Chemical mapping of a 177-nucleotide RNA with 2A3 and DMS.
The data come from the RNA Mapping Database (RMDB), libraries RFM100 and RFMREP.
DMS adducts were read by reverse transcription with MarathonRT.
Conditions: 150 mM KOAc, 10 mM MgCl2 and 150 mM bicine (pH 8.5), 24 C.

RNA sequence: GGGAACGACUCGAGUAGAGUCGAAAACAGGCCAGAAGAGGCGCGUUGCCCAAGUAACGGUGUUGGAGGAGCCAGUCCUGUGAUAACACCUGAGGGGGUGCAUCGCCGAGGUGAUUGAACGGCUGGCCCAUGCCUCCUGAUUCGUCAGGAGGCAUGGAAAAGAAACAACAACAACAAC
Reactivity to 2A3 in 0.01 (KOAc 150mM, MgCl2 10mM, bicine 150mM(pH8.5), 24C), signal-to-noise 5, nucleotides 027 to 126: c020a020g050g000c010c010a030g030a140a040g070a160g070g000c060g000c020g090u050u100g070c010c010c010a040a020g130u090a060a050c140g000g000u000g010u000u020g000g040a070g000g000a010g090c100c000a020g140u080c000c010u180g000u040g140a020u050a120a010c000a010c000c010u010g040a220g020g040g000g000g010u120g060c060a130u120c050g040c030c010g000a060g000g070u100g010a300u070u070g030a050a000c010g000g000c000u000g000g000c010
Reactivity to DMS in 0.01 (KOAc 150mM, MgCl2 10mM, bicine 150mM(pH8.5), 24C), signal-to-noise 5, nucleotides 027 to 126: c070a120g010g010c010c010a060g000a110a080g010a160g000g000c040g010c280g000u000u010g000c000c000c010a060a120g000u040a130a160c200g000g020u000g010u000u020g000g000a050g010g000a070g000c140c160a060g010u000c000c000u010g030u020g010a120u030a010a010c010a010c000c000u030g010a150g010g000g000g000g000u020g010c120a050u000c020g010c000c010g000a070g000g000u010g000a150u010u000g000a190a040c040g000g000c000u000g000g000c020